Notes
The data come from the RNA Mapping Database (RMDB), library RFMREP. An RNA of 177 nucleotides, treated with 2A3 and read out base by base. The RNA was probed in 150 mM KOAc, 10 mM MgCl2 and 150 mM bicine (pH 8.5) at 24 C. Values cover nucleotides 27 to 126. For 2A3, 1,375 sequencing reads were counted. For 2A3 the reverse transcriptase was SuperScript II with manganese.
[RMDB]
RNA sequence: GGGAACGACUCGAGUAGAGUCGAAAACGCCCCUUCGGGGGCGAAACCGGCAGUUGCCUGUUGAUCCGCCGCAAUUAUGAUGGACGAAUCACAGUCAACUGUUGGCAAAAACGAGUGUUCGCACUCGCCAAGUAUUUCACUUCGGUGAAAUACUUGGAAAAGAAACAACAACAACAAC
Reactivity to 2A3 in 0.01 (KOAc 150mM, MgCl2 10mM, bicine 150mM(pH8.5), 24C), signal-to-noise 2, nucleotides 027 to 126: c010g030c020c010c050c070u040u090c180g070g000g040g000g000c040g010a070a010a010c010c000g030g000c010a020g010u000u000g000c030c000u050g020u140u110g020a000u030c020c010g000c000c010g000c060a030a080u300u140a270u300g190a130u140g010g070a110c010g000a000a000u000c000a000c000a010g000u000c000a000a020c010u000g000u010u000g000g000c030a030a030a030a030a120c020g010a000g000u010g030u110u160c150g060c050a000c000u000c000g010